[RMDB]
RNA sequence: GGGAACGACUCGAGUAGAGUCGAAAACGCUGGGCGGCUCGUACCGAAAGCUUUGAUCUCCUGAAGCGCGCACGGGAGGGAGCUUGUUACGAGAAGCCUGUGCUGAAGCGCGCACGGCAACCGAAAGGUGCGUUGGGCCUCCGUUCGCGGAGGCCAACGAUUAUCUUGUUUUCGAACAAGAUAAUCGAAAAGAAACAACAACAACAAC
Reactivity to 2A3 in 0.01 (KOAc 150mM, MgCl2 10mM, bicine 150mM(pH8.5), 24C), signal-to-noise 5, nucleotides 027 to 156: c010g000c000u020g000g000g020c030g050g000c000u010c000g010u000a030c090c150g300a300a110a010g050c050u300u270u010g000a000u010c000u000c000c000u020g050a180a060g020c000g000c000g000c010a010c000g010g010g010a000g000g010g000a000g000c020u140u190g160u210u040a000c000g000a000g010a000a000g000c000c000u010g010u010g020c000u020g020a130a030g000c000g010c000g010c000a000c010g000g000c000a010a010c000c000g050a060a030a020g000g000u010g000c000g000u030u130g060g000g010c000c000u000c000c000g010u030u070c280g000c000g080g000a000g000g000c000c000a000a010
Reactivity to DMS in 0.01 (KOAc 150mM, MgCl2 10mM, bicine 150mM(pH8.5), 24C), signal-to-noise 2, nucleotides 027 to 156: c040g020c010u030g010g010g050c000g050g020c030u000c020g030u020a050c190c280g010a130a090a060g020c000u000u000u000g010a060u010c000u010c010c010u000g000a040a030g050c010g020c030g000c020a300c030g000g000g020a030g020g030g000a020g010c010u000u000g020u000u010a050c020g000a040g030a030a090g040c010c020u000g010u010g000c020u010g000a080a080g050c000g040c030g020c000a300c000g020g000c010a050a050c000c000g000a080a070a120g060g020u010g010c020g000u000u000g010g010g000c000c000u000c020c010g030u000u010c300g000c000g000g000a040g070g050c000c000a000a000

Chemical mapping of a 207-nucleotide RNA with 2A3 and DMS. It was measured as part of the RMDB library RNAMAK. The RNA was probed in 150 mM KOAc, 10 mM MgCl2 and 150 mM bicine (pH 8.5) at 24 C. High 2A3 reactivity points to a flexible backbone, as in loops and unpaired stretches. For 2A3 the reverse transcriptase was SuperScript II with manganese. For 2A3, 8,157 sequencing reads were counted.